[RMDB]
RNA sequence: GGGAACGACUCGAGUAGAGUCGAAAAGAUAUGGAUAUUCAAUGAAAAUGUGGGAGAUUGCAAACACCUCGGAAACGAGGUGGACGUAUAAUCAUCGAUCACAUUUUCAUUGUAAUAUCCUAAGUCAUCUAUGGUCUUGGUUCGCCAAGACCAUAGAAAAAGAAACAACAACAACAAC
Reactivity to DMS in 0.01 (KOAc 150mM, MgCl2 10mM, bicine 150mM(pH8.5), 24C), signal-to-noise 2, nucleotides 027 to 126: g020a000u000a300u010g000g000a020u000a010u000u030c020a010a000u000g020a020a000a000a000u000g060u000g000g000g000a270g010a000u020u000g050c120a060a280a290c000a010c020c020u000c000g000g000a110a050a190c010g040a020g000g050u000g000g000a100c300g000u000a040u010a020a100u020c150a200u020c050g000a300u020c020a000c000a010u000u000u000u000c000a020u010u000g000u000a000a020u000a010u000c000c000u010a080a070g000u000c010a110
An RNA of 177 nucleotides, treated with DMS and read out base by base. The RNA was probed in 150 mM KOAc, 10 mM MgCl2 and 150 mM bicine (pH 8.5) at 24 C. For DMS, 955 sequencing reads were counted. Reactivities are rounded to 0.1 and cut off at 0 and 3. For DMS the reverse transcriptase was MarathonRT.